Chemical mapping of a 177-nucleotide RNA with DMS and 2A3. The DMS profile rests on 1,445 reads. Conditions: 150 mM KOAc, 10 mM MgCl2 and 150 mM bicine (pH 8.5), 24 C. DMS adducts were read by reverse transcription with MarathonRT. It was measured as part of the RMDB library TTRDES. 2A3 adducts were read by reverse transcription with SuperScript II with manganese.
RNA sequence: GGGAACGACUCGAGUAGAGUCGAAAAGAUAUGGAGCGAUAGAAGCUCGAUAAGCCACUACUCGGAAACGAGUAAUGGCUUUUGACGAGCCUAUCGCUCCUAAGUCAAACGCUAGUUCGCUAGCGAAGCGAAGUACGAUGUUCGCAUCGUACUUCGCAAAAGAAACAACAACAACAAC
Reactivity to DMS in 0.01 (KOAc 150mM, MgCl2 10mM, bicine 150mM(pH8.5), 24C), signal-to-noise 2, nucleotides 027 to 126: g000a050u000a300u010g000g000a000g010c000g000a000u020a000g030a260a130g020c000u010c010g000a200u010a010a010g000c000c000a000c040u000a020c010u000c000g000g000a100a080a200c010g000a000g010u010a000a000u000g000g010c000u000u000u000u000g010a250c150g000a010g010c020c000u000a030u000c020g000c010u000c000c000u000a000a050g010u000c030a150a110a160c030g020c000u010a020g010u000u010c280g060c000u010a010g000c000g000a110a060
Reactivity to 2A3 in 0.01 (KOAc 150mM, MgCl2 10mM, bicine 150mM(pH8.5), 24C), signal-to-noise 1, nucleotides 027 to 126: g030a000u010a020u170g000g030a000g000c040g000a010u010a000g120a300a010g030c000u010c020g010a040u080a120a000g010c010c000a010c010u020a000c000u020c010g000g000a110a000a040c000g000a020g000u000a000a000u020g000g000c040u010u000u000u020g020a020c040g000a000g010c000c000u000a000u010c000g000c000u000c000c000u010a000a000g000u000c010a000a000a080c020g030c000u010a000g010u060u120c300g040c150u010a010g000c050g000a140a010